[RMDB]
RNA sequence: GGGAACGACUCGAGUAGAGUCGAAAAUGCACUUUCUCAAUUCGAUGUCUAAGGUCAGAAAAGACGUGCCAGAGUGGAAACCCUCCUCGGGAUGGCACGAUUGGCAGCAAGUGCCUUUCUGCUCAAACCACUUUCAGGAAUUGAUCAUGAAGGACGGUCAGCGCAUUAGGUUCGCCUAAUGCGCUGAAAAAGAAACAACAACAACAAC
Reactivity to 2A3 in 0.01 (KOAc 150mM, MgCl2 10mM, bicine 150mM(pH8.5), 24C), signal-to-noise 1, nucleotides 027 to 156: u110g030c030a040c030u060u110u040c040u020c050a120a160u110u040c060g120a110u060g080u030c080u130a100a060g050g000u000c000a000g080a010a130a000a000g110a040c010g010u020g000c010c010a020g000a020g050u070g030g020a100a150a100c010c000c050u030c040c040u070c010g080g000g040a120u060g020g000c000a020c070g000a000u010u010g070g000c000a000g000c000a280a000g160u050g090c000c000u030u030u000c010u010g040c000u090c070a060a070a060c030c040a030c130u070u230u070c110a050g050g050a090a090u050u060g000a040u100c080a110u090g030a100a010g040g030a010c050g070g010